[RMDB]
RNA sequence: GGGAACGACUCGAGUAGAGUCGAAAAUCACCAGAUGCUGCAUCACCUGAUCACUGAUGGCUCAACGGUAUCCGGCGGUACAACUGAAUACUUGUAGCUGCCUUUAGAGCGGGUUGGCUGCAAUCCGAAAAGAGGACACACUUCGGUGUGUCCUCAACUUAUUACUACACUUCGGUGUAGUAAUAAGAAAAGAAACAACAACAACAAC
Reactivity to 2A3 in 0.01 (KOAc 150mM, MgCl2 10mM, bicine 150mM(pH8.5), 24C), signal-to-noise 9, nucleotides 027 to 156: u070c020a030c030c000a010g010a030u040g000c020u020g030c010a030u030c020a030c010c010u030g040a070u060c020a010c060u030g010a030u030g050g010c040u060c080a070a060c030g010g010u010a020u010c010c010g020g010c030g040g060u130a080c050a140a040c110u130g050a120a070u110a150c060u020u070g010u030a010g020c010u010g000c010c000u030u060u070a070g000a010g030c040g010g010g020u210u290g070g000c010u010g010c010a010a090u050c040c020g050a030a030a040a060g010a000g000g010a000c000a000c000a000c000u060u130c230g070g000u000g000u000g000u010c000c000u000c000a000a000
Reactivity to DMS in 0.01 (KOAc 150mM, MgCl2 10mM, bicine 150mM(pH8.5), 24C), signal-to-noise 3, nucleotides 027 to 156: u000c030a100c000c010a070g030a050u010g010c040u010g000c020a140u000c090a030c010c020u000g000a110u000c080a130c130u000g030a090u000g000g020c050u010c030a130a090c010g020g020u000a020u010c010c020g010g030c000g000g010u010a070c140a070a110c040u010g010a080a070u000a030c060u000u000g000u000a040g030c010u000g020c010c000u000u000u010a090g020a080g010c080g010g010g020u010u010g030g020c050u020g010c010a060a060u000c030c010g000a110a070a090a190g010a030g010g000a020c000a030c010a000c010u000u000c240g040g040u010g010u000g000u000c000c000u000c000a000a020

Source: RMDB library M2RFPK, as collected in RNAgym.
An RNA of 207 nucleotides, treated with 2A3 and DMS and read out base by base.
Reactivities are given for positions 27 through 156.
The DMS profile rests on 7,575 reads.
DMS adducts were read by reverse transcription with MarathonRT.